[RMDB]
RNA sequence: GGGAACGACUCGAGUAGAGUCGAAAAGUCAAUCUGAAAGUGCUAAAUCUUUCUUACAACAAUUUUUCAGAUGUAUCGCACAUGAAACUUGAGAGCAUUACCGAAUUGUACCUCUCCGGUAAUAAGCAUAGGAUCCACUAUUCGUAGUGGAUCCUAUAAAAGAAACAACAACAACAAC
Reactivity to 2A3 in 0.01 (KOAc 150mM, MgCl2 10mM, bicine 150mM(pH8.5), 24C), signal-to-noise 5, nucleotides 027 to 126: g040u040c030a020a100u010c010u090g060a090a060a010g020u040g010c060u090a090a080a170u050c030u030u190u050c070u090u170a070c070a200a020c020a090a150u060u030u000u050u130c040a020g000a000u030g060u090a080u120c050g030c030a010c010a050u090g060a080a110a040c040u050u060g010a030g000a010g100c050a040u000u040a020c010c000g030a080a070u090u110g020u070a080c000c000u020c010u000c020c000g000g000u010a020a020u080a120a010g080c060
Reactivity to DMS in 0.01 (KOAc 150mM, MgCl2 10mM, bicine 150mM(pH8.5), 24C), signal-to-noise 4, nucleotides 027 to 126: g020u020c060a040a060u000c010u000g010a070a060a090g000u010g010c080u010a100a100a080u000c060u010u000u010c110u000u010a060c110a110a120c240a010a070u010u010u020u000u000c030a010g020a040u010g000u020a070u000c150g010c060a080c080a070u030g010a050a080a080c080u040u000g000a070g000a050g040c100a030u020u000a040c020c040g000a050a070u000u030g000u010a070c090c020u000c050u000c040c010g000g000u010a020a020u030a070a110g040c140